Structure probing data (DMS and 2A3) for a 177-nucleotide construct.
Source: RMDB library M2PK90, as collected in RNAgym.
The 2A3 profile rests on 3,859 reads.
For DMS, 4,305 sequencing reads were counted.
RNA sequence: GGGAACGACUCGAGUAGAGUCGAAAAUUAAAAUUUGAGGCAUCAAGUGGAAGGGUAGUCGGCAGGGUCAAGGUCGGGAAGAAUGAGGACUCUAAACCAACCAAGCUUAUGAGUGGAAUACUAAAAACAUUAAAGUGAAGUUCGCUUCACUUUAAUGAAAAGAAACAACAACAACAAC
Reactivity to DMS in 0.01 (KOAc 150mM, MgCl2 10mM, bicine 150mM(pH8.5), 24C), signal-to-noise 4, nucleotides 027 to 126: u000u020a060a070a100a110u000u000u010g000a100g000g030c090a060u000c060a060a080g010u010g010g010a090a060g000g010g010u000a060g020u000c070g000g010c070a070g000g000g010u000c060a030a060g010g010u000c050g000g010g000a090a060g000a060a060u000g020a120g000g000a050c060u000c050u000a040a070a120c050c060a050a070c050c060a050a120g010c050u010u000a050u010g010a030g010u000g010g000a060a070u010a040c070u010a030a060a050a080a100
Reactivity to 2A3 in 0.01 (KOAc 150mM, MgCl2 10mM, bicine 150mM(pH8.5), 24C), signal-to-noise 3, nucleotides 027 to 126: u060u030a060a020a050a070u080u040u080g050a030g040g000c030a040u010c050a100a030g030u050g090g050a060a060g040g010g000u040a030g060u050c040g000g030c040a030g040g000g030u040c040a040a020g030g030u040c040g030g000g040a040a010g030a050a040u180g000a060g010g080a020c000u000c030u110a110a080a050c030c000a010a030c010c010a040a000g000c020u120u100a060u150g010a020g030u050g020g060a070a030u110a120c050u110a080a060a040a040a000